Chemical mapping of a 177-nucleotide RNA with DMS and 2A3. The reactions ran in a buffer of 150 mM KOAc, 10 mM MgCl2 and 150 mM bicine (pH 8.5), at 24 C. It was measured as part of the RMDB library M2PK50. For 2A3, 1,159 sequencing reads were counted.

RNA sequence: GGGAACGACUCGAGUAGAGUCGAAAACUUACGUGGUUCGCCACGUAAGAAAGUGGAAGAGGACCGAUGAACCCACACAAAACAAGACAUCGAAAAAUAAAAAAACACGCUGCUUCGGCAGCGUGAAUCAUUAGGUUUUCUUCGGAAAACCUAAUGAAAAAGAAACAACAACAACAAC
Reactivity to DMS in 0.01 (KOAc 150mM, MgCl2 10mM, bicine 150mM(pH8.5), 24C), signal-to-noise 1, nucleotides 027 to 126: c000u000u000a000c000g000u000g010g010u000u030c270g020c000c000a000c000g010u000a010a000g000a070a010a060g020u000g000g020a080a110g020a190g010g000a080c070c070g040a120u010g000a110a160c050c000c050a040c000a040c090a090a080a070a110c090a040a120g000a050c030a030u000c030g010a010a040a050a090a100u050a020a000a060a050a020a040a120c000a000c000g030c010u010g020c000u000u000c230g040g000c000a010g000c010g040u000g000a010a060
Reactivity to 2A3 in 0.01 (KOAc 150mM, MgCl2 10mM, bicine 150mM(pH8.5), 24C), signal-to-noise 1, nucleotides 027 to 126: c000u010u010a010c010g020u010g000g000u030u030c050g050c080c000a000c000g000u000a000a000g020a070a050a000g040u040g040g080a080a050g070a190g090g150a090c000c050g020a040u040g030a000a050c030c010c010a020c000a000c020a030a120a040a000c010a040a000g070a060c000a010u100c040g050a010a030a060a170a030u300a030a140a050a010a020a040a010c000a000c020g010c010u010g000c000u050u050c200g080g030c000a010g000c000g010u000g000a000a010